Notes:
The record gives the reactivity of an RNA of 207 nucleotides to 2A3. It was measured as part of the RMDB library RNAMAK. Conditions: 150 mM KOAc, 10 mM MgCl2 and 150 mM bicine (pH 8.5), 24 C. Reactivities are given for positions 27 through 156.
RNA sequence: GGGAACGACUCGAGUAGAGUCGAAAAGAUAUGGAUUGGAACUACAUCCUAUCUCAUGCUUGGAUUUACACGUCGGAAACGACGUGUUGUCAGCAUGAGUAAGGGAUGCCAAUCCUAAGUCAAAACACCAGGGAUACCUUCGGGUAUCCCUGGUGAAGCAUUCCAGCUAGUUCGCUAGCUGGAAUGCAAAAGAAACAACAACAACAAC
Reactivity to 2A3 in 0.01 (KOAc 150mM, MgCl2 10mM, bicine 150mM(pH8.5), 24C), signal-to-noise 2, nucleotides 027 to 156: g010a000u040a040u060g000g000a000u000u010g060g020a060a090c130u080a090c300a000u000c000c020u050a120u120c000u000c000a000u000g000c000u130u170g080g030a010u100u070u180a000c000a000c020g020u010c030g000g090a080a130a070c010g000a000c000g020u000g010u020u000g000u000c010a010g000c020a000u000g020a000g020u050a070a090g040g000g000a000u010g020c000c000a000a000u040c000c000u010a050a000g050u010c020a000a000a140a220c030a050c020c000a000g000g000g000a000u010a000c000c000u070u210c300g090g000g000u000a000u000c000c000c000u010g000g000u000g000a010a000